Annotation: Chemical mapping of a 177-nucleotide RNA with 2A3 and DMS. For 2A3, 3,760 sequencing reads were counted. Source: RMDB library TTRDEL, as collected in RNAgym. DMS (dimethyl sulfate) methylates the pairing face of unpaired adenines and cytosines.
RNA sequence: GGGAACGACUCGAGUAGAGUCGAAAAGAUAUGGAUCCCAGGAGGGAGCCAUUCGGAAACGAAUGAGCGAGGAUCUCCGGGAUCCUAAGUCAGUACGAACUAGACGUGUUCGCACGUCUAGUUCGAAGAUCUCAUCGAUGUUCGCAUCGAUGAGAUCAAAAGAAACAACAACAACAAC
Reactivity to 2A3 in 0.01 (KOAc 150mM, MgCl2 10mM, bicine 150mM(pH8.5), 24C), signal-to-noise 2, nucleotides 027 to 126: g000a020u050a030u140g000g000a000u000c000c060c130a150g010g010a010g000g020g020a020g000c000c000a010u030u010c000g030g010a120a060a020c020g020a010a010u100g000a130g090c010g060a210g050g010a030u010c000u010c010c020g010g030g000a010u010c000c000u010a070a000g060u030c030a010g090u120a050c010g000a000a030c010u000a000g000a010c020g050u040g020u050u100c300g020c080a000c000g030u000c000u000a000g000u000u020c000g000a010a000
Reactivity to DMS in 0.01 (KOAc 150mM, MgCl2 10mM, bicine 150mM(pH8.5), 24C), signal-to-noise 2, nucleotides 027 to 126: g010a030u000a300u000g000g000a000u000c000c000c000a120g030g000a020g000g000g010a050g000c000c000a000u000u010c010g000g000a080a130a150c000g020a020a010u000g010a210g020c000g010a030g020g000a040u000c000u000c000c020g010g000g000a010u000c000c010u000a020a080g000u010c040a050g020u000a240c020g000a000a020c000u000a000g000a020c020g010u000g020u000u020c230g010c010a000c000g010u000c010u000a000g000u000u000c000g000a070a060